[RMDB]
RNA sequence: GGGAACGACUCGAGUAGAGUCGAAAAGAUAUGGAUGUGAGACGCUUUUGACGUGCAGCUGAUCGGAAACGAUCAGCGCACGAUAAGCGUCCACAUCCUAAGUCAAACGAGUAGUUCGCUACUCGAACCAUAUCCGCCUGUUCGCAGGCGGAUAUGGAAAAGAAACAACAACAACAAC
Reactivity to DMS in 0.01 (KOAc 150mM, MgCl2 10mM, bicine 150mM(pH8.5), 24C), signal-to-noise 1, nucleotides 027 to 126: g000a030u020a300u020g010g010a000u000g000u000g020a220g020a010c010g000c000u000u000u010u000g030a270c020g000u000g010c000a120g040c010u000g000a000u000c010g040g000a120a140a180c020g000a010u000c010a010g020c010g010c010a010c010g010a070u000a010a010g000c010g010u000c010c000a010c010a000u000c000c000u000a020a150g000u000c010a090a110a190c010g000a010g000u000a010g000u010u020c300g040c000u000a060c010u000c030g000a080a240
Reactivity to 2A3 in 0.01 (KOAc 150mM, MgCl2 10mM, bicine 150mM(pH8.5), 24C), signal-to-noise 2, nucleotides 027 to 126: g020a020u090a040u190g000g020a000u000g110u000g020a300g030a080c010g040c030u100u100u130u300g270a140c100g010u020g030c070a110g000c030u000g000a000u020c000g070g000a100a010a070c000g000a010u000c000a000g000c000g000c010a000c000g030a000u020a000a000g000c000g000u000c010c010a000c020a010u000c000c000u000a020a000g070u030c050a020a090a140c030g010a000g020u020a000g000u010u170c300g030c210u000a010c010u000c000g040a050a030